[RMDB]
RNA sequence: GGGAACGACUCGAGUAGAGUCGAAAAGUUCGACCGUUCGCGGUCGAACAAAAUAAAACAGUACAUAGCCUCGCGAAAGCGUUGUACUGAAUGGCUAAGAAAAAACGAUAUGGUUCGCCAUAUCGAACAUUCUGAUUCACUUCGGUGAAUCAGAAUGAAAAGAAACAACAACAACAAC
Reactivity to 2A3 in 0.01 (KOAc 150mM, MgCl2 10mM, bicine 150mM(pH8.5), 24C), signal-to-noise 2, nucleotides 027 to 126: g000u000u010c010g010a010c030c000g010u000u060c280g000c000g110g000u000c000g030a000a000c000a000a000a000a000u040a000a010a020a000c000a000g000u010a010c000a020u070a050g020c000c040u060c060g130c070g070a110a030a010g050c010g010u020u030g000u020a010c010u010g050a010a030u070g040g040c030u180a240a110g110a090a150a020a020a000a030c020g010a000u000a000u010g010g000u020u060c160g000c070c000a000u000a000u010c000g000a010a000
Reactivity to DMS in 0.01 (KOAc 150mM, MgCl2 10mM, bicine 150mM(pH8.5), 24C), signal-to-noise 2, nucleotides 027 to 126: g000u000u000c000g010a010c000c000g010u010u000c200g050c020g010g000u010c000g000a010a000c000a010a070a010a040u000a030a150a130a070c020a000g000u020a000c010a050u000a250g040c060c060u030c120g050c160g000a070a160a170g030c000g000u010u020g000u000a000c000u070g000a040a010u010g020g000c110u030a070a140g050a010a030a060a070a040a130c000g020a000u000a000u000g010g010u000u000c180g010c000c010a000u000a000u000c000g000a050a120
An RNA of 177 nucleotides, treated with 2A3 and DMS and read out base by base. For 2A3, 2,443 sequencing reads were counted. High 2A3 reactivity points to a flexible backbone, as in loops and unpaired stretches.